[RMDB]
RNA sequence: GGGAACGACUCGAGUAGAGUCGAAAAGAUAUGGAGCGUUCUGAACUACGUGACUCGGAAACGAGAGAACACGCAGACGCUCCUAAGUCAAAAGACGGUAGGGAACCUUCGGGUUCCCUACCGUCAAGAAUUUAAUGGUGUUCGCACCAUUAAAUUCAAAAGAAACAACAACAACAAC
Reactivity to DMS in 0.01 (KOAc 150mM, MgCl2 10mM, bicine 150mM(pH8.5), 24C), signal-to-noise 1, nucleotides 027 to 126: g010a050u000a300u030g000g010a010g000c010g000u020u000c050u000g020a050a100c140u020a300c000g010u000g000a130c000u000c000g030g030a190a180a170c010g000a010g010a100g000a160a120c000a010c000g000c000a000g020a030c030g000c010u000c000c000u000a020a170g000u010c040a090a030a170a210g000a020c010g000g020u000a020g000g000g000a020a020c020c000u000u000c210g030g020g040u000u000c020c020c000u000a000c040c010g010u010c000a000a050

This 177-nucleotide RNA was probed chemically with DMS. Conditions: 150 mM KOAc, 10 mM MgCl2 and 150 mM bicine (pH 8.5), 24 C. It was measured as part of the RMDB library TTRDEL. Reactivities are given for positions 27 through 126.